[RMDB]
RNA sequence: GGGAACGACUCGAGUAGAGUCGAAAAUCGACUAGCCGUAGUGGCGAAGAACGACCUGGUAGGGUGCCGCAGAGACCCACUAUUAGGCUAGUAUAAAAAUCUCUGCGGAGUAUAGACAGAACAUUAAGCCUAAUAAUACUUUCGAGUAUUAUUAGGCAAAAGAAACAACAACAACAAC
Reactivity to 2A3 in 0.01 (KOAc 150mM, MgCl2 10mM, bicine 150mM(pH8.5), 24C), signal-to-noise 4, nucleotides 027 to 126: u090c020g010a000c000u020a000g000c020c000g030u010a000g000u000g020g010c040g040a070a030g080a100a070c070g090a070c000c010u070g080g090u140a110g090g050g050u050g050c020c010g000c010a000g000a010g000a020c010c000c040a000c010u010a000u040u160a030g000g000c000u000a000g000u000a000u020a000a000a000a010a030u020c010u010c000u000g010c010g000g000a000g030u100a080u060a080g160a070c100a040g100a260a020c010a080u160u160a210a030
Reactivity to DMS in 0.01 (KOAc 150mM, MgCl2 10mM, bicine 150mM(pH8.5), 24C), signal-to-noise 6, nucleotides 027 to 126: u040c020g010a050c000u000a010g000c010c000g000u010a010g030u000g020g010c290g010a180a130g020a120a150c130g000a060c020c000u010g000g000u030a090g010g010g010u000g030c000c010g010c000a010g010a020g000a090c300c000c000a010c000u010a020u030u050a150g020g020c000u000a000g000u010a020u000a000a010a000a020a020u000c000u000c000u000g000c000g000g020a090g000u000a090u030a130g010a090c130a110g000a090a080c140a090u040u030a060a200